[RMDB]
RNA sequence: GGGAACGACUCGAGUAGAGUCGAAAAACCGGCUCAGAACUGGAGCGGACAAGGGGAAUCCGACUGUUUAAUUAAAACAAAGCAUUGUGAUGGCCGGAGACGGUGUUGACACAAUGUGAUUUCUGCCCAUACCUUAAACCUUCGGGUUUAAGGUAUGAAAAGAAACAACAACAACAAC
Reactivity to DMS in 0.01 (KOAc 150mM, MgCl2 10mM, bicine 150mM(pH8.5), 24C), signal-to-noise 5, nucleotides 027 to 126: a090c070c010g020g020c040u000c070a100g020a110a070c100u010g030g020a060g000c030g000g000a060c070a070a070g010g010g020g000a190a120u010c030c070g010a100c110u000g020u010u000u010a100a090u010u010a050a060a060a050c100a070a130a250g010c010a010u000u000g000u000g010a140u000g010g010c010c000g010g010a170g000a170c000g020g010u000g000u020u000g020a180c110a020c000a020a010u000g020u010g000a130u000u000u000c020u000g010c300c050
Reactivity to 2A3 in 0.01 (KOAc 150mM, MgCl2 10mM, bicine 150mM(pH8.5), 24C), signal-to-noise 4, nucleotides 027 to 126: a000c010c010g070g000c050u060c080a080g040a180a060c070u100g040g080a060g070c010g000g010a020c040a080a110g030g030g040g000a030a030u000c020c020g050a050c070u050g100u100u070u050a150a150u100u150a040a060a020a040c060a040a110a010g020c010a010u000u000g000u010g010a180u080g080g000c000c000g010g000a020g020a010c010g000g050u060g100u190u190g100a030c000a010c000a040a000u000g010u000g040a060u030u020u000c030u020g020c010c010